[RMDB]
RNA sequence: GGGAACGACUCGAGUAGAGUCGAAAACGCUCCCCUCGAUCCACCUUCGAGGGGGUUCACACCCCCAGUCGGCGGGCCGGCUACUCUUCUUUUCCUUUCCUCGUCCUCCCCGGUCAGCCUCCAGAGUAAAGCAGUGCCUUCGGGCACUGCAAAAGAAACAACAACAACAAC
Reactivity to DMS in 0.01 (KOAc 150mM, MgCl2 10mM, bicine 150mM(pH8.5), 24C), signal-to-noise 1, nucleotides 027 to 129: c180g030c160u040c010c050c010c010u020c070g020a100u020c080c070a120c150c060u030u000c010g060a070g080g020g020g000g000u000u000c210a140c200a240c100c020c010c030c040a190g020u000c110g010g030c020g000g020g040c030c010g000g030c090u000a060c040u000c020u000u000c020u010u000u030u030c000c000u080u000u020c020c010u000c040g020u030c040c000u030c000c000c000c000g030g020u040c050a000g030c000c020u000c020c030a030g020a000g070u070a070a140a080
Reactivity to 2A3 in 0.01 (KOAc 150mM, MgCl2 10mM, bicine 150mM(pH8.5), 24C), signal-to-noise 2, nucleotides 027 to 129: c080g050c030u140c000c000c010c000u000c000g040a020u090c110c060a070c090c030u020u010c010g030a040g000g010g000g000g000u030u030c050a050c000a000c010c000c000c000c000a020g100u070c010g030g010c000g010g000g080c000c000g030g020c000u020a030c000u020c000u070u020c000u020u050u010u030c010c010u100u030u110c000c000u070c000g020u020c000c020u010c030c020c000c000g010g020u010c000a000g000c000c010u000c020c020a010g020a010g050u060a120a050a000

The record gives the reactivity of an RNA of 170 nucleotides to DMS and 2A3.
For DMS the reverse transcriptase was MarathonRT.
The DMS profile rests on 6,342 reads.
The reactions ran in a buffer of 150 mM KOAc, 10 mM MgCl2 and 150 mM bicine (pH 8.5), at 24 C.